[RMDB]
Record summary:
Conditions: 150 mM KOAc, 10 mM MgCl2 and 150 mM bicine (pH 8.5), 24 C. The record gives the reactivity of an RNA of 207 nucleotides to 2A3 and DMS. For 2A3, 1,978 sequencing reads were counted. In probing experiments dimethyl sulfate is read out at A N1 and C N3, which are open when not base-paired. DMS adducts were read by reverse transcription with MarathonRT. The DMS profile rests on 2,858 reads. The data come from the RNA Mapping Database (RMDB), library M2RFPK.
RNA sequence: GGGAACGACUCGAGUAGAGUCGAAAACUCCCCUCAAAAUCGUUUCAGUCCAAAAUUGAUUCGGCGGCCCUGUCAUGAGGCCGACACGAAGGCACGUACCCCUUCGAAUGGCGUCGGGGAGUCAGCGAAAGCACUGACCCUUUCGAGGGUCAGUGAACCUUUGAUAAAGGUUCGCCUUUAUCAAAGGAAAAGAAACAACAACAACAAC
Reactivity to 2A3 in 0.01 (KOAc 150mM, MgCl2 10mM, bicine 150mM(pH8.5), 24C), signal-to-noise 3, nucleotides 027 to 156: c010u010c000c020c020c010u120c070a150a160a090a130u060c030g000u010u020u060c030a070g010u060c030c080a060a080a100a170u120u060g030a120u040u050c020g060g000c010g000g000c030c000c000u110g060u180c050a140u080g020a090g040g000c000c000g010a000c010a000c010g000a010a010g020g010c090a000c150g110u150a080c030c010c000c020u010u000c010g070a070a090u130g030g030c040g030u030c020g020g000g000g010a010g030u020c030a000g020c030g150a150a040a010g070c000a010c000u000g000a000c000c000c000u000u020u070c120g100a010g000g010g000u010c000a000g000u000g000a010a010
Reactivity to DMS in 0.01 (KOAc 150mM, MgCl2 10mM, bicine 150mM(pH8.5), 24C), signal-to-noise 1, nucleotides 027 to 156: c040u010c000c000c000c050u000c040a100a020a110a030u000c020g020u010u000u000c000a120g050u000c030c120a080a050a240a070u020u020g000a130u000u000c040g060g000c010g020g000c040c000c000u000g020u040c300a120u000g000a090g010g020c010c020g020a000c040a090c000g010a040a060g010g020c070a120c110g010u000a150c050c030c000c020u070u010c020g010a010a130u010g010g030c000g050u000c160g000g000g010g000a030g040u000c020a110g020c030g010a100a080a190g020c010a010c000u020g000a020c000c000c010u000u000u000c190g010a030g020g030g010u000c000a000g000u000g010a020a080